[RMDB]
RNA sequence: GGGAACGACUCGAGUAGAGUCGAAAAUCAGAAUCAGGCCGGAGGGUUUAGCGCUCCGUAAACACGGUCGUACAUCCAGCCGGUAGCCUGGUUCCUUGCAUUGAGUGAUGUACGGAGUUUAUAGAGCAAAAGAAAGACCUGUUCGCAGGUCUUUCAACUGCUUAAAGAUGUUCGCAUCUUUAAGCAGAAAAGAAACAACAACAACAAC
Reactivity to DMS in 0.01 (KOAc 150mM, MgCl2 10mM, bicine 150mM(pH8.5), 24C), signal-to-noise 1, nucleotides 027 to 156: u000c060a090g000a040a060u000c010a040g010g030c010c040g040g070a150g040g010g040u000u000u000a130g010c150g040c000u000c020c000g010u000a040a050a070c100a140c070g020g020u000c010g000u000a030c010a040u000c000c040a210g000c040c000g020g000u000a060g000c060c000u010g010g010u000u000c000c010u000u000g000c010a250u010u020g010a150g010u000g000a040u000g020u010a080c000g000g000a180g010u000u000u000a030u010a110g040a110g050c040a110a050a140a130g020a040a030a000g000a010c000c000u000g010u000u000c300g030c020a030g030g010u000c000u000u000u000c000a070a160
Reactivity to 2A3 in 0.01 (KOAc 150mM, MgCl2 10mM, bicine 150mM(pH8.5), 24C), signal-to-noise 2, nucleotides 027 to 156: u090c000a010g020a000a010u020c000a000g040g000c040c020g020g020a010g030g060g020u090u160u150a060g030c080g030c060u050c020c000g000u030a050a070a020c110a000c050g030g020u050c000g010u020a010c010a050u000c020c020a010g080c020c000g050g000u040a020g000c000c000u010g000g000u000u010c010c010u010u070g010c020a110u050u140g050a060g080u080g030a010u030g010u040a030c020g050g010a070g010u100u160u010a160u090a060g080a010g040c040a070a070a040a060g020a000a010a000g000a000c000c000u000g020u040u050c200g010c080a000g020g000u000c000u000u000u000c000a000a000